[RMDB]
RNA sequence: GGGAACGACUCGAGUAGAGUCGAAAAAGCAAUCAGCCCACUGUUCAUAUUCCAAUUUCUUCUGGAAGACUUCUUCAUCGCAGAGUUGAUUGAACCUUUACUUGUUCCAAACGGGAGUUGGACCAUAAGUUGUAAGUUCGUUCGCGAACUUACAACUAAAAGAAACAACAACAACAAC
Reactivity to DMS in 0.01 (KOAc 150mM, MgCl2 10mM, bicine 150mM(pH8.5), 24C), signal-to-noise 1, nucleotides 027 to 126: a110g010c020a050a000u010c000a120g010c000c000c070a080c060u010g000u000u010c120a040u000a150u000u000c010c030a020a050u020u000u030c180u030u010c200u010g000g030a030a050g010a140c170u000u000c060u000u020c060a070u010c120g030c070a040g010a230g010u000u010g010a020u010u000g010a040a070c090c020u010u000u000a080c110u020u000g010u000u000c000c040a060a070a040c240g010g040g030a050g020u000u000g000g000a100c050c030a060u030a050
Record summary:
An RNA of 177 nucleotides, treated with DMS and read out base by base. Source: RMDB library OK2TRN, as collected in RNAgym. DMS adducts were read by reverse transcription with MarathonRT.